[RMDB]
RNA sequence: GGGAACGACUCGAGUAGAGUCGAAAACUUCACAAGGAGUGUAUUCUGAUGAUAAGCAAGUCAACAUCAAUCUAUGAGUGUCGGAGAAGGGUUUUGAGAAUGUAGCAAUUUUUAUUAAUUGUGUUAUCAAGGGUUUGUUUUUCGAAACAAACCCUUGAAAAGAAACAACAACAACAAC
Reactivity to DMS in 0.01 (KOAc 150mM, MgCl2 10mM, bicine 150mM(pH8.5), 24C), signal-to-noise 1, nucleotides 027 to 126: c020u000u010c010a080c140a060a090g000g010a100g010u000g020u070a050u010u010c040u000g000a090u020g050a030u000a080a050g000c080a010a000g010u010c050a130a070c100a040u010c020a030a060u000c050u040a010u040g020a040g000u000g000u000c040g030g000a050g000a030a050g000g000g000u000u000u030u040g000a050g010a050a100u000g000u010a200g020c030a010a010u030u000u000u040u100a100u000u000a080a030u000u030g000u000g000u000u010a120u000
Reactivity to 2A3 in 0.01 (KOAc 150mM, MgCl2 10mM, bicine 150mM(pH8.5), 24C), signal-to-noise 2, nucleotides 027 to 126: c020u100u100c040a060c080a100a090g020g000a020g060u050g000u180a230u090u070c190u080g070a070u020g020a040u050a090a000g060c080a050a000g010u110c080a110a160c000a080u020c000a040a020u030c020u060a050u160g040a030g050u080g050u080c000g100g010a120g010a030a000g040g000g030u000u000u070u210g080a050g040a080a050u250g000u080a070g000c000a000a030u000u020u050u030u070a140u090u150a040a000u030u000g000u020g060u120u140a090u100